[RMDB]
RNA sequence: GGGAACGACUCGAGUAGAGUCGAAAAGUAGAGUGUAUCAUGUCAGUAAGCAUGCCGGGGAAUGGUGGUUUACCCCGUUAUCAAAUGAUCACCGACCAAUAAUUGGCGAAACUCGUUUCGCGUUGGCAAAGUCACGGCGUGUUCGCACGCCGUGAAAUCUAGGAGUCUCGUUCGCGAGACUCCUAGAAAAAGAAACAACAACAACAAC
Reactivity to 2A3 in 0.01 (KOAc 150mM, MgCl2 10mM, bicine 150mM(pH8.5), 24C), signal-to-noise 2, nucleotides 027 to 156: g110u120a010g030a050g070u090g030u060a070u110c030a030u040g090u070c080a060g120u140a110a000g040c010a010u030g080c010c000g010g000g000g010a010a000u050g000g000u000g000g000u000u000u040a050c000c000c050c020g060u040u020a010u000c010a010a010a000u020g000a000u000c000a010c000c000g050a080c000c020a020a010u140a190a120u150u180g110g010c000g010a010a020a010c060u090c080g090u000u000u010c010g000c010g000u010u010g000g000c080a070a010a110g040u030c000a000c020g000g000c000g030u030g000u100u070c100g000c060a000c010g000c000c000g010u000g010a000a000a010